[RMDB]
RNA sequence: GGGAACGACUCGAGUAGAGUCGAAAACUCAAUGGCAGAAGAGUUUGGUACUCCUAUGCCUAAGGCUGUCACUACUGUUAAGCCCUCAGGUACACUGUCUAAGAUCAUGGACACUACAGAGGGUGUACACAAGCCGCUUGGUAAGUACAUCAUCAACCCUUAGAGAGCUUUUCGAAGCUCUCUAAGGAAAAGAAACAACAACAACAAC
Reactivity to DMS in 0.01 (KOAc 150mM, MgCl2 10mM, bicine 150mM(pH8.5), 24C), signal-to-noise 1, nucleotides 027 to 156: c020u010c030a080a260u000g060g000c010a030g050a200a170g010a010g030u010u000u000g050g080u010a100c010u000c000c020u000a300u000g010c000c140u010a140a140g010g000c000u000g030u010c050a120c100u000a040c070u010g030u010u000a120a280g000c010c010c010u000c000a080g010g050u000a080c060a110c090u000g000u040c020u000a100a150g030a260u010c200a160u000g000g000a000c010a010c060u000a030c030a130g000a000g000g040g030u000g020u010a050c290a100c090a040a170g000c010c060g000c140u000u000g010g030u010a070a120g060u000a110c060a100u010c010a030u000c010a050a110c160
Reactivity to 2A3 in 0.01 (KOAc 150mM, MgCl2 10mM, bicine 150mM(pH8.5), 24C), signal-to-noise 1, nucleotides 027 to 156: c010u000c030a000a130u140g040g000c080a000g020a140a000g000a020g000u040u120u300g120g050u170a020c010u010c010c030u040a030u060g000c000c020u010a120a020g000g000c000u000g020u110c020a020c050u090a040c000u070g010u180u140a080a060g020c010c000c010u000c010a020g000g210u010a020c090a020c040u040g010u000c020u060a090a110g010a250u110c090a130u170g000g000a000c010a000c110u010a020c070a020g000a010g000g040g000u040g000u040a010c030a000c010a030a070g030c000c000g000c090u080u150g040g000u030a040a110g080u040a060c050a180u190c010a020u000c030a080a000c010